This 177-nucleotide RNA was probed chemically with DMS and 2A3. The RNA was probed in 150 mM KOAc, 10 mM MgCl2 and 150 mM bicine (pH 8.5) at 24 C.
[RMDB]
RNA sequence: GGGAACGACUCGAGUAGAGUCGAAAAGGUUGAAUUGCUCAUUCUCUUCCAACUGGAACGCAUUCACUUCCGCAGGCAACAGCAUUUUCCGCUCAAAUACCAAAGCCAACACAAACAGAAAAAUUGCGAUUACAACUAAGUUCGCUUAGUUGUAAUCAAAAGAAACAACAACAACAAC
Reactivity to DMS in 0.01 (KOAc 150mM, MgCl2 10mM, bicine 150mM(pH8.5), 24C), signal-to-noise 6, nucleotides 027 to 126: g010g010u000u000g000a070a120u010u010g010c040u010c060a120u000u010c030u010c050u000u000c030c050a110a090c110u000g000g000a070a110c140g000c060a070u000u000c050a060c080u010u000c040c030g020c050a030g000g010c040a050a050c070a070g010c050a030u030u000u010u010c020c040g020c020u000c040a060a060a050u010a100c050c050a040a070a110g010c030c030a030a050c070a060c110a060a080a070c150a100g000a050a040a040a080a110u020u000g010c300
Reactivity to 2A3 in 0.01 (KOAc 150mM, MgCl2 10mM, bicine 150mM(pH8.5), 24C), signal-to-noise 9, nucleotides 027 to 126: g090g000u060u050g030a070a070u120u080g020c010u020c070a060u100u000c050u010c000u070u040c040c020a110a090c080u080g030g030a060a030c030g010c040a040u060u050c030a030c040u070u020c010c020g000c040a020g050g010c020a060a020c010a110g030c020a030u040u040u070u020c020c020g000c020u050c050a080a120a040u100a060c020c030a080a040a030g030c020c010a060a000c030a010c010a040a190a020c050a030g240a080a110a020a030a030u110u090g040c030